[RMDB]
RNA sequence: GGGAACGACUCGAGUAGAGUCGAAAAUGCAGAUGCUUGUUCUUGACGAAGCUGAUAGAUGUUUAGACAUGGGGUUUAAAAAAACUCUGGAUGCCAUCGUAAGCACAUUGUCACCAUCUAGACAAACGGUACUGAUAGCGUUCGCGCUAUCAGUACCAAAAGAAACAACAACAACAAC
Reactivity to 2A3 in 0.01 (KOAc 150mM, MgCl2 10mM, bicine 150mM(pH8.5), 24C), signal-to-noise 1, nucleotides 027 to 126: u170g000c030a000g020a110u070g040c050u090u040g040u020u080c100u150u140g040a010c070g050a040a000g010c040u060g040a000u000a060g000a000u050g110u060u180u140a050g010a020c010a120u110g030g000g000g070u000u080u140a130a280a040a020a000a000a000c020u050c010u000g140g060a100u040g030c030c000a140u050c100g070u140a010a060g010c020a030c010a080u000u150g010u000c020a000c020c000a010u000c010u090a060g100a160c080a030a150a000c060
Reactivity to DMS in 0.01 (KOAc 150mM, MgCl2 10mM, bicine 150mM(pH8.5), 24C), signal-to-noise 1, nucleotides 027 to 126: u000g050c040a030g000a150u000g040c000u000u000g000u000u000c030u000u020g000a050c020g010a110a200g010c020u000g050a060u000a050g000a080u000g010u000u030u000a120g010a060c040a120u000g000g030g000g020u100u020u040a040a000a040a060a060a010a010c040u000c000u010g000g000a150u000g010c040c040a090u000c200g010u010a110a120g020c070a040c110a080u010u000g000u000c040a060c120c010a000u000c010u000a010g020a140c080a140a040a090c150